[RMDB]
RNA sequence: GGGAACGACUCGAGUAGAGUCGAAAAGAUAUGGAUCCAAGCAAGGCCCUGGUGUCGGAAACGACACUUGUACAGGAUAGGCUGAUGACCUUGGAGUCCUAAGUCAAAAGGAACGUUCGCGUUCCAAGAAGUAAGCCUUGUUCGCAAGGCUUACUUCAAAAGAAACAACAACAACAAC
Reactivity to 2A3 in 0.01 (KOAc 150mM, MgCl2 10mM, bicine 150mM(pH8.5), 24C), signal-to-noise 1, nucleotides 027 to 126: g010a000u060a010u040g010g010a020u040c000c020a000a020g000c030a080a300g050g050c090c040c060u040g030g000u000g000u030c000g020g020a000a000a000c000g000a000c000a020c020u020u060g050u060a130c050a070g000g270a220u240a240g190g000c000u090g040a300u020g000a000c000c000u000u010g000g000a020g220u110c000c000u000a010a000g030u010c010a080a000a000a150g000g030a000a000c010g010u050u100c300g000c020g180u030u040c000c000a000a000
Reactivity to DMS in 0.01 (KOAc 150mM, MgCl2 10mM, bicine 150mM(pH8.5), 24C), signal-to-noise 1, nucleotides 027 to 126: g000a010u000a040u000g000g000a180u010c030c000a020a000g000c010a010a020g030g020c020c010c040u030g000g030u010g010u000c000g000g000a010a010a030c000g020a010c000a010c000u000u000g000u020a170c300a110g040g050a210u010a160g010g010c000u000g000a050u000g000a110c300c000u000u000g000g000a030g020u000c000c000u000a010a060g000u010c000a050a060a130a190g020g010a020a000c010g020u000u000c210g010c010g020u000u000c000c000a060a080